[RMDB]
RNA sequence: GGGAACGACUCGAGUAGAGUCGAAAAGGGACGCCUUUAGAAGAAGAGGCUAGGUGGUAUUCCGGUGUGGGAUACUUGGUAAUAUGUAACGCUAAUUGCAUAAGAUUGCAGGACGGAAUUUACAGUCAAAACGGUCCUGCGUUCGCGCAGGACCGAACUCGAACGGGACGUUCGCGUCCCGUUCGAGAAAAGAAACAACAACAACAAC
Reactivity to 2A3 in 0.01 (KOAc 150mM, MgCl2 10mM, bicine 150mM(pH8.5), 24C), signal-to-noise 1, nucleotides 027 to 156: g080g030g030a050c110g050c060c030u080u080u060a170g060a300a000g000a010a000g020a010g030g000c050u030a000g000g060u070g000g000u060a100u060u020c010c020g000g090u300g030u170g070g000g000a020u000a010c020u030u070g130g010u110a090a110u060a050u080g060u060a030a020c060g010c080u030a060a050u080u020g010c000a020u020a190a030g050a170u040u040g020c010a020g000g000a010c030g060g050a000a000u180u080u080a110c070a040g070u110c090a000a000a060a130c030g000g000u000c000c000u000g000c000g000u000u010c130g000c010g000c020a000g000g100a010c000c000g000a000a000
Conditions: 150 mM KOAc, 10 mM MgCl2 and 150 mM bicine (pH 8.5), 24 C. This 207-nucleotide RNA was probed chemically with 2A3. For 2A3, 454 sequencing reads were counted. 2A3 adducts were read by reverse transcription with SuperScript II with manganese.